[RMDB]
RNA sequence: GGGAACGACUCGAGUAGAGUCGAAAAAUGAGUUCACACCUCUCAGGACAGCGAUGCAGGGAAAGGAUCAUGGCAGGGAGGAUGAAGGGAAACCGCUUGAUCCAAUGCAGGCGUUCACAGUAUUUGACGAAUUGAAAUGGUUCGCCAUUUCAAUUCGAAAAGAAACAACAACAACAAC
Reactivity to DMS in 0.01 (KOAc 150mM, MgCl2 10mM, bicine 150mM(pH8.5), 24C), signal-to-noise 3, nucleotides 027 to 126: a110u010g000a090g030u000u000c090a090c130a120c130c030u000c020u000c100a100g010g010a100c080a050g030c050g010a120u000g010c080a050g000g010g020a070a090a150g000g000a040u000c040a020u000g010g030c040a080g010g020g010a060g010g000a090u000g000a100a100g030g000g000a080a070a120c080c010g010c010u000u000g010a040u000c030c070a070a070u020g010c060a040g000g010c050g030u000u000c060a070c100a080g000u020a100u000u000u010g020a280
Reactivity to 2A3 in 0.01 (KOAc 150mM, MgCl2 10mM, bicine 150mM(pH8.5), 24C), signal-to-noise 4, nucleotides 027 to 126: a000u080g010a000g050u110u110c040a020c000a030c080c000u030c000u020c050a030g000g070a080c020a040g000c030g060a040u050g020c020a020g100g030g000a050a080a030g030g000a010u020c010a020u070g150g020c080a100g070g000g030a020g080g030a050u120g090a050a090g110g010g010a060a060a000c020c020g010c020u000u010g030a030u040c060c030a020a030u160g000c000a010g070g040c020g040u100u080c040a020c010a070g090u100a210u080u100u120g080a060